Structure probing data (DMS and 2A3) for a 177-nucleotide construct. As a SHAPE reagent, 2A3 marks flexible, mostly unpaired nucleotides at the ribose 2'-OH. For 2A3, 475 sequencing reads were counted. DMS adducts were read by reverse transcription with MarathonRT. Reactivities are given for positions 27 through 126.

[RMDB]
RNA sequence: GGGAACGACUCGAGUAGAGUCGAAAACUGUUACAAUUUGCCGGUCAUUGGGGAGUAGCCGCUCUUCGUUUCGAAGGGGCUUACGUCAACAUACUUGACCGGCAGGUCAUGGCGUAAGCGGUUCUAAGACACAUUGAGCAUUCGUGCUCAAUGUGUCAAAAGAAACAACAACAACAAC
Reactivity to DMS in 0.01 (KOAc 150mM, MgCl2 10mM, bicine 150mM(pH8.5), 24C), signal-to-noise 2, nucleotides 027 to 126: c020u000g010u030u040a110c130a040a040u030u040u000g020c030c020g000g000u000c040a100u000u000g010g000g000g000a100g000u000a030g000c020c040g000c070u000c000u000u000c040g000u010u000u030c040g050a020a010g010g010g000g010c000u010u010a000c030g030u020c040a020a030c000a120u020a200c180u000u010g030a010c000c000g050g010c050a000g000g000u000c140a210u000g000g000c090g010u000a110a070g000c210g000g010u000u000c070u050a030a180
Reactivity to 2A3 in 0.01 (KOAc 150mM, MgCl2 10mM, bicine 150mM(pH8.5), 24C), signal-to-noise 1, nucleotides 027 to 126: c010u000g130u190u110a090c050a010a000u050u030u030g000c000c000g020g020u060c000a050u060u300g120g000g000g000a010g010u020a000g000c020c040g110c040u080c000u040u000c000g150u060u100u300c120g000a000a040g000g000g000g000c040u080u090a000c000g130u010c000a030a030c000a010u170a120c120u040u000g000a000c000c030g000g000c020a020g000g000u000c020a010u120g040g060c030g040u040a160a020g050c070g040g110u050u070c040u070a060a030